[RMDB]
RNA sequence: GGGAACGACUCGAGUAGAGUCGAAAACUAAAUAAGGAUGGCCAAUCGUUAAUAAUUGGUAGACCAAUUGAUUAACAUCUUUGCCUUUUGUUGAAAAAAGCCAAUUAUCAAUGGUUGAAGCGAUCAAAUCGCAUAAAUGAUUCGUCAUUUAUGCGAUAAAAGAAACAACAACAACAAC
Reactivity to DMS in 0.01 (KOAc 150mM, MgCl2 10mM, bicine 150mM(pH8.5), 24C), signal-to-noise 7, nucleotides 027 to 126: c020u010a030a090a110u010a100a110g010g000a020u000g000g010c010c000a020a010u000c010g010u000u000a030a000u000a000a010u000u000g010g010u010a060g000a140c250c070a030a050u010u010g000a070u000u000a100a120c140a110u000c040u000u000u000g000c150c060u000u000u000u010g010u010u010g000a010a040a050a030a060a110g010c020c010a020a020u000u000a010u000c030a010a010u000g010g020u000u000g000a090a130g020c020g000a020u000c020a060a080
Reactivity to 2A3 in 0.01 (KOAc 150mM, MgCl2 10mM, bicine 150mM(pH8.5), 24C), signal-to-noise 3, nucleotides 027 to 126: c010u060a020a030a170u190a100a070g170g000a020u050g110g000c010c000a010a000u010c010g020u020u010a030a010u000a000a010u010u010g020g000u060a040g040a040c030c040a040a110u060u070g030a040u080u080a060a050c000a090u000c010u090u060u110g040c010c000u040u060u050u060g130u070u120g160a100a110a000a000a010a000g010c010c000a000a010u030u010a000u000c010a010a010u030g030g020u000u020g040a100a010g040c020g020a010u020c020a020a050
This 177-nucleotide RNA was probed chemically with DMS and 2A3. Reactivities are given for positions 27 through 126. The DMS profile rests on 10,200 reads. Source: RMDB library OK2TST, as collected in RNAgym.